[RMDB]
RNA sequence: GGGAACGACUCGAGUAGAGUCGAAAAGCCAACCAAGGUGGUGUUGCCAUACGAUCCUAACAGCUUAAAACCUUUAAAGCUGCAGUUUCAUGCAUCUGGCGGAGAUAACAACUACGCUUGGUUCUCCCCACCCAGGGCACUUCGGUGCCCUGGGUGGAAAAGAAACAACAACAACAAC
Reactivity to 2A3 in 0.01 (KOAc 150mM, MgCl2 10mM, bicine 150mM(pH8.5), 24C), signal-to-noise 1, nucleotides 027 to 126: g030c000c050a010a020c050c000a000a010g000g000u000g000g020u040g000u060u280g040c050c000a000u010a020c010g000a000u020c000c000u070a200a030c020a020g040c000u050u100a010a150a270a300c070c070u130u050u300a000a000a070g030c000u000g000c000a030g000u060u000u070c040a110u120g110c040a000u020c010u050g000g000c060g040g050a130g050a140u300a140a040c060a200a010c060u070a050c040g070c270u010u000g000g000u020u020c020u050c000c050